[RMDB]
RNA sequence: GGGAACGACUCGAGUAGAGUCGAAAAUAGCGUAAUACCUUGCCGCUUAAUUGGCGGCUUGCAUGAACGGAUUAACGACUCCCCCACUGUCCCCGGCCGGAAGCCGGCGAACCCGACAUCCCAGUGACUUUCGUAUAUUUUUCGAAAUAUACGAAAGAAAAGAAACAACAACAACAAC
Reactivity to 2A3 in 0.01 (KOAc 150mM, MgCl2 10mM, bicine 150mM(pH8.5), 24C), signal-to-noise 9, nucleotides 027 to 126: u100a010g060c020g020u050a050a040u110a220c020c020u010u040g000c000c010g010c030u090u090a160a080u200u280g020g000c000g000g000c000u000u030g020c030a070u110g070a070a020c040g020g060a060u060u070a080a030c020g080a090c030u020c010c000c000c000c010a040c030u040g030u040c020c000c000c000g020g000c010c000g080g020a050a020g030c010c000g000g010c010g010a010a010c000c010c010g010a020c010a030u020c010c000c010a030g040u050g070a050
Reactivity to DMS in 0.01 (KOAc 150mM, MgCl2 10mM, bicine 150mM(pH8.5), 24C), signal-to-noise 9, nucleotides 027 to 126: u010a080g020c020g020u000a070a050u010a120c260c040u000u010g010c000c010g010c000u000u020a120a130u030u030g010g000c010g010g000c000u000u000g000c150a070u020g010a100a060c050g000g010a060u010u010a050a190c040g000a070c030u000c010c020c010c000c020a070c090u010g000u000c020c020c000c030g010g020c020c030g010g000a100a160g010c020c010g000g010c050g010a060a070c040c000c020g000a070c080a080u000c010c000c020a110g010u020g010a180
This 177-nucleotide RNA was probed chemically with 2A3 and DMS. Source: RMDB libraries RFM100 and RFMREP, as collected in RNAgym. Conditions: 150 mM KOAc, 10 mM MgCl2 and 150 mM bicine (pH 8.5), 24 C. For 2A3 the reverse transcriptase was SuperScript II with manganese.